[RMDB]
RNA sequence: GGGAACGACUCGAGUAGAGUCGAAAAGCUGAAUCCUUGAGGGUGUCGGCGAUUGUCAGGGCUGCGCGGACGACACCGUCGACCGACACAAAAACGACAGUCUCGCCUCGGGAUUCGCCGUCCAGGCGCACGAGCGGUCCUUCGGGACCGCUCGUGCAAAAGAAACAACAACAACAAC
Reactivity to 2A3 in 0.01 (KOAc 150mM, MgCl2 10mM, bicine 150mM(pH8.5), 24C), signal-to-noise 2, nucleotides 027 to 126: g150c150u120g010a000a000u000c030c020u110u300g050a000g000g070g010u020g050u000c000g010g020c050g000a000u000u110g000u020c170a210g030g020g070c060u080g010c010g020c030g070g000a030c030g020a020c020a050c060c000g020u000c010g050a190c010c000g050a030c000a020c090a030a140a000a000a010c080g010a040c010a040g140u050c030u000c080g050c000c000u000c000g000g000g000a050u000u030c010g000c000c000g000u140c000c000a060g100g100c050
This 177-nucleotide RNA was probed chemically with 2A3. Reactivities are given for positions 27 through 126. 2A3 adducts were read by reverse transcription with SuperScript II with manganese. Conditions: 150 mM KOAc, 10 mM MgCl2 and 150 mM bicine (pH 8.5), 24 C. For 2A3, 650 sequencing reads were counted. The data come from the RNA Mapping Database (RMDB), library OK1LIB.